An RNA of 177 nucleotides, treated with 2A3 and read out base by base. It was measured as part of the RMDB library OK1LIB. Values are in units of 0.01, from 0 to 300, in steps of 10.
RNA sequence: GGGAACGACUCGAGUAGAGUCGAAAAGGUGGUUAAGCAUGCUACCACCAGGUAUGACCUGUGAGGUGGAAAACAGGUCAUUUGCCGAACCACCAAACGCGAAAGCGAAAGCAUGCUUACCACCGAAGGGUUUCGUAUCCUUCGGGAUACGAAACCCAAAAGAAACAACAACAACAAC
Reactivity to 2A3 in 0.01 (KOAc 150mM, MgCl2 10mM, bicine 150mM(pH8.5), 24C), signal-to-noise 2, nucleotides 027 to 126: g000g000u000g000g050u120u100a010a000g020c010a000u000g010c010u080a070c010c000a020c150c000a010g030g000u180a120u300g030a010c000c000u040g000u000g010a130g050g050u130g080g170a060a060a030a030c040a030g000g010u030c030a060u110u030u110g020c060c010g060a070a040c000c020a040c010c080a030a010a040c030g000c000g100a080a120a000g060c000g000a080a000a000g010c000a000u000g000c000u000u000a000c000c000a000c000c000g000a060a000